[RMDB]
RNA sequence: GGGAACGACUCGAGUAGAGUCGAAAAGGAUCCUUAGUAGUCAGGGUAACUGCCACCUGAACAGUUACCAGUGAUGACUAGUCAAUGUGUCAUCGUUCAGGUGGAUGACGUAUUGAAAUAAGGAUCGCUACACGUAAGUAUUCGUACUUACGUGUAGAAAAGAAACAACAACAACAAC
Reactivity to DMS in 0.01 (KOAc 150mM, MgCl2 10mM, bicine 150mM(pH8.5), 24C), signal-to-noise 9, nucleotides 027 to 126: g000g000a000u000c000c000u000u000a040g010u000a030g010u000c000a050g000g010g010u000a010a030c030u000g010c070c050a130c160c120u000g000a020a210c000a020g000u000u000a010c020c010a150g010u010g010a100u000g010a030c030u000a070g010u000c020a010a020u000g000u000g000u000c010a010u000c010g020u000u000c130a070g000g010u010g010g010a010u000g000a010c010g010u000a020u000u000g000a030a240a130u000a010a010g010g000a010u000c000g010
Reactivity to 2A3 in 0.01 (KOAc 150mM, MgCl2 10mM, bicine 150mM(pH8.5), 24C), signal-to-noise 5, nucleotides 027 to 126: g040g000a000u000c000c000u020u010a020g050u020a000g010u050c030a020g000g000g090u010a010a020c010u030g020c020c030a130c020c060u040g090a040a010c000a010g000u010u020a020c000c020a030g050u050g120a120u050g010a010c020u020a030g050u010c010a010a020u020g020u010g000u020c000a010u000c020g040u070u030c060a040g030g180u040g080g010a000u010g000a000c000g010u020a020u010u040g030a040a030a070u060a010a000g000g000a000u000c000g000